[RMDB]
RNA sequence: GGGAACGACUCGAGUAGAGUCGAAAAGGGGUCAAGGAAGGCAUAGCAGAGCGUAUGACCCAGCUGAAGCCUCCACGGCUGCAUACGCGACGAAGCUAUGCAGCAGCAGCUCCUUGACGGAGGCACCCAAACUGGUGCAGUUUCGACUGCACCAGAACGAAGUACUAGAGUUCGCUCUAGUACUUCGAAAAGAAACAACAACAACAAC
Reactivity to 2A3 in 0.01 (KOAc 150mM, MgCl2 10mM, bicine 150mM(pH8.5), 24C), signal-to-noise 2, nucleotides 027 to 156: g140g010g010g010u080c030a030a020g070g060a110a030g170g000c000a000u000a000g010c020a010g010a000g000c010g000u000a000u010g080a150c060c040c010a000g010c000u020g020a080a010g000c000c000u010c000c010a010c030g000g000c010u020g020c000a010u010a000c010g020c010g130a250c010g010a040a000g010c000u010a000u040g000c020a010g020c000a020g000c010a010g030c010u020c010c000u030u030g000a020c050g010g010a000g000g010c000a030c000c010c010a060a070a040c000u000g020g000u000g000c000a000g010u010u040u180c190g120a040c010u000g000c000a000c000c000a000g000a000a010
Reactivity to DMS in 0.01 (KOAc 150mM, MgCl2 10mM, bicine 150mM(pH8.5), 24C), signal-to-noise 2, nucleotides 027 to 156: g000g010g030g010u000c040a050a130g020g000a130a120g010g020c020a060u000a030g040c030a060g000a080g020c020g000u000a060u000g000a130c120c110c030a010g030c010u000g000a090a110g000c000c000u030c010c000a300c070g010g030c010u000g000c010a000u010a000c030g040c020g000a220c150g000a170a180g000c040u000a020u020g000c000a070g000c080a130g010c090a150g000c030u000c000c010u010u020g000a080c060g000g020a030g080g060c020a100c010c020c010a050a070a140c010u000g040g000u010g000c000a000g030u000u000u010c300g010a090c020u000g000c000a010c010c000a000g000a020a160